Chemical mapping of a 207-nucleotide RNA with DMS and 2A3. DMS adducts were read by reverse transcription with MarathonRT. The reactions ran in a buffer of 150 mM KOAc, 10 mM MgCl2 and 150 mM bicine (pH 8.5), at 24 C. Source: RMDB library OK3TST, as collected in RNAgym. For 2A3 the reverse transcriptase was SuperScript II with manganese. For DMS, 1,653 sequencing reads were counted.
RNA sequence: GGGAACGACUCGAGUAGAGUCGAAAAAUGAAAGAUGAACUUGCAAAGGUGAGCAUAGGCUUUCUUUGCCUUUCACACUACAGAAUUUAAAUUUUAUCCGAUUGGUGAUAUUAAGCCUUUGAAAGAUUUUAACAAGUUAAUGAUACAACCAAAGUGAACCGUAGUGGAUAUUCGUAUCCACUACGGUAAAAGAAACAACAACAACAAC
Reactivity to DMS in 0.01 (KOAc 150mM, MgCl2 10mM, bicine 150mM(pH8.5), 24C), signal-to-noise 1, nucleotides 027 to 156: a080u010g010a150a090a120g050a110u000g010a040a110c070u000u010g000c000a110a020a090g030g030u000g030a110g000c030a170u000a050g040g020c030u000u000u010c080u020u000u000g030c020c030u010u000u000c030a080c060a080c040u040a280c090a120g030a070a120u020u020u010a080a080a120u000u000u000u010a140u000c020c070g010a140u000u000g010g010u000g000a080u000a080u000u000a070a210g020c040c030u040u000u020g000a020a040a150g010a160u000u000u020u000a090a180c030a100a040g020u020u000a040a100u000g010a230u010a040c050a030a100c030c030a040a110a150g010u000g000a090
Reactivity to 2A3 in 0.01 (KOAc 150mM, MgCl2 10mM, bicine 150mM(pH8.5), 24C), signal-to-noise 2, nucleotides 027 to 156: a000u150g040a050a070a010g100a050u090g000a070a030c060u070u090g020c030a050a000a000g000g040u150g010a000g040c040a140u150a090g000g090c030u060u110u040c000u080u090u140g000c020c000u040u040u040c010a030c000a000c040u190a010c020a010g130a110a010u110u070u060a120a090a090u100u060u150u150a040u060c060c010g080a100u000u110g030g010u040g010a010u050a040u300u190a100a000g020c010c000u000u010u060g080a060a080a100g010a050u030u160u000u270a060a030c000a040a020g020u080u090a110a070u090g070a000u030a090c060a020a040c020c030a090a050a070g090u130g000a020